[RMDB]
RNA sequence: GGGAACGACUCGAGUAGAGUCGAAAAGGCUUCGACUCCGGACGUCGAGGCAGGGGAAGCGGGCCGAGGAUGAGCGGUUAUCUCGUUAACGAUCCGUUCAGAACAACAGCUGCCACUAAGACGCAGCCUGCUAGCUCCACUUUCGCCCUCGCGGCCUCACGGAUAAGUACUUCGGUACUUAUCCGUGAAAAGAAACAACAACAACAAC
Reactivity to 2A3 in 0.01 (KOAc 150mM, MgCl2 10mM, bicine 150mM(pH8.5), 24C), signal-to-noise 3, nucleotides 027 to 156: g120g020c040u010u000c010g030a020c010u040c090c030g110g090a050c060g040u050c030g000a020g000g000c000a050g000g000g000g000a050a020g020c020g020g010g020c010c020g020a070g050g050a050u030g000a000g000c010g000g000u130u140a090u060c020u000c020g130u110u190a100a060c060g010a020u060c000c010g000u020u000c010a000g030a100a020c060a000a000c010a050g010c010u020g010c010c030a040c100u160a100a010g030a050c050g000c020a000g000c000c000u020g000c020u030a040g040c010u010c010c000a080c010u080u090u100c070g030c010c020c010u000c040g060c040g020g000c000c010u000
Conditions: 150 mM KOAc, 10 mM MgCl2 and 150 mM bicine (pH 8.5), 24 C. An RNA of 207 nucleotides, treated with 2A3 and read out base by base. Reactivities are rounded to 0.1 and cut off at 0 and 3. It was measured as part of the RMDB library RSTRND.